[RMDB]
RNA sequence: GGGAACGACUCGAGUAGAGUCGAAAAUGAUCGUGUGUCCCAUUGGAUUCGUCGCCGACCAUAUCGAGGUGGUGUGGGAUCUCGACCACGAGUUGCGAUUACAAGCCGAGGCAGCGGGCAUCGCGUACGCAUACGGUUUGUUCGCAAACCGUAUGCGAAAAGAAACAACAACAACAAC
Reactivity to 2A3 in 0.01 (KOAc 150mM, MgCl2 10mM, bicine 150mM(pH8.5), 24C), signal-to-noise 2, nucleotides 027 to 126: u080g030a040u030c010g020u030g010u030g050u070c020c000c010a010u000u120g060g000a010u040u000c040g100u080c040g190c040c030g150a070c010c000a080u080a050u260c120g070a100g040g090u050g000g030u050g020u060g010g010g000a030u000c030u020c030g020a020c000c030a030c030g040a070g050u030u060g000c020g000a000u010u080a050c040a070a070g040c000c000g020a030g080g000c020a030g030c030g010g060g000c000a050u080c020g010c010g010u040a030
Reactivity to DMS in 0.01 (KOAc 150mM, MgCl2 10mM, bicine 150mM(pH8.5), 24C), signal-to-noise 3, nucleotides 027 to 126: u000g010a090u000c010g020u000g000u010g020u000c020c020c030a160u020u000g050g000a090u000u010c070g000u010c090g000c050c010g000a090c030c010a050u010a120u010c150g010a120g020g020u000g010g020u000g030u000g000g000g000a040u000c060u000c040g000a070c060c020a050c040g000a080g030u000u000g010c010g020a050u000u020a050c140a060a070g010c040c010g020a130g000g020c050a120g000c070g010g010g040c110a060u000c070g000c070g030u010a060